Structure probing data (2A3) for a 207-nucleotide construct.
As a SHAPE reagent, 2A3 marks flexible, mostly unpaired nucleotides at the ribose 2'-OH.
For 2A3, 485 sequencing reads were counted.
2A3 adducts were read by reverse transcription with SuperScript II with manganese.
RNA sequence: GGGAACGACUCGAGUAGAGUCGAAAAGAUCGGAAACAGCAGCAGGUGAGUCCGCCUUAUGUGAAGGAUCGGCUGAAACACGAGGAAAUACUGAGCGAACGCAAGACGGUAGCCGAACAGUAGCAACAAAACGCUUACGUGUUCGCACGUAAGCGAACAUGUACUGGCGCUUCGGCGCCAGUACAUGAAAAGAAACAACAACAACAAC
Reactivity to 2A3 in 0.01 (KOAc 150mM, MgCl2 10mM, bicine 150mM(pH8.5), 24C), signal-to-noise 1, nucleotides 027 to 156: g050a120u130c090g040g000a110a010a000c040a030g130c010a000g000c070a010g040g020u010g100a140g030u010c040c000g090c110c000u180u180a140u140g090u070g070a160a090g020g040a050u070c040g000g000c020u060g070a110a000a000c110a000c050g010a040g030g050a030a040a030u080a070c050u010g010a010g050c080g010a040a010c000g000c120a040a000g040a010c000g000g070u090a000g110c110c000g040a000a040c000a000g000u060a000g000c000a010a010c010a040a060a080a020c050g000c000u010u040a000c000g170u000g000u000u030c120g020c050a000c010g000u010a000a000g010c000g000a040a000